[RMDB]
RNA sequence: GGGAACGACUCGAGUAGAGUCGAAAAUAGAAAUUCGGGGAGGAGAGCAUCUUACACAAUGGGAGAGCAAUCUUCCUAGCCAUUUACAAACUUGGGGCCCUGGCAAGAGUGGUGGGGAACGGGUCCCACAUAACUGCCUAUGUUGAGAGCUGUAUAACUCCUACCCUAAUUUCGAUUAGGGUAGGAGAAAAGAAACAACAACAACAAC
Reactivity to 2A3 in 0.01 (KOAc 150mM, MgCl2 10mM, bicine 150mM(pH8.5), 24C), signal-to-noise 1, nucleotides 027 to 156: u060a010g060a010a120a000u200u140c010g000g000g000g000a050g000g000a020g000a000g100c020a100u000c010u110u110a060c000a000c040a090a110u090g040g000g000a000g000a000g000c010a000a150u000c000u010u010c000c000u000a040g010c000c000a040u240u250u090a070c100a170a170a030c050u060u060g000g000g050g000c110c000c000u000g030g010c090a040a000g040a000g110u090g070g060u140g010g010g000g010a040a070c020g000g010g000u000c000c020c000a000c010a000u060a000a020c010u020g020c000c000u010a100u090g050u120u080g050a110g010a000g080c260u210g040u300a220u270a160a000
Structure probing data (2A3) for a 207-nucleotide construct. Conditions: 150 mM KOAc, 10 mM MgCl2 and 150 mM bicine (pH 8.5), 24 C. Values cover nucleotides 27 to 156.